[RMDB]
RNA sequence: GGGAACGACUCGAGUAGAGUCGAAAACGUGCCAACGUCAACCCAUUGGGUGCUGCGUUUAGUACCAAAUUUGGGCGUUCAGCCAGCCGUGUGAUCUGGCCAGUAUUUGAAACAAAGAUCGUGCAAACCACCCAUUGAGAUUCGUCUCAAUGGGUGGAAAAGAAACAACAACAACAAC
Reactivity to DMS in 0.01 (KOAc 150mM, MgCl2 10mM, bicine 150mM(pH8.5), 24C), signal-to-noise 3, nucleotides 027 to 126: c030g020u010g020c090c070a040a080c080g000u010c140a150a170c010c000c010a120u010u020g010g010g000u000g000c020u020g010c300g020u000u010u000a030g050u000a040c010c010a110a040a170u010u000u010g010g010g000c030g010u000u000c140a110g020c040c030a040g030c110c100g000u000g000u010g000a050u000c020u010g000g000c010c030a100g010u000a070u000u010u000g000a130a080a110c100a060a040a040g010a050u000c050g020u010g040c090a080a090a260
Reactivity to 2A3 in 0.01 (KOAc 150mM, MgCl2 10mM, bicine 150mM(pH8.5), 24C), signal-to-noise 3, nucleotides 027 to 126: c030g040u080g080c080c050a080a020c030g070u050c030a080a040c020c000c000a060u080u140g120g000g010u020g030c010u030g020c040g250u160u100u230a040g020u000a030c020c000a000a090a120u090u080u050g050g020g000c040g020u050u050c020a020g000c000c020a000g000c000c040g150u130g040u080g090a090u050c020u040g000g030c000c010a010g020u020a190u070u190u170g130a090a080a020c070a000a110a040g080a040u070c030g010u060g020c040a060a040a110

An RNA of 177 nucleotides, treated with DMS and 2A3 and read out base by base. The 2A3 profile rests on 2,420 reads. For DMS the reverse transcriptase was MarathonRT. The reactions ran in a buffer of 150 mM KOAc, 10 mM MgCl2 and 150 mM bicine (pH 8.5), at 24 C.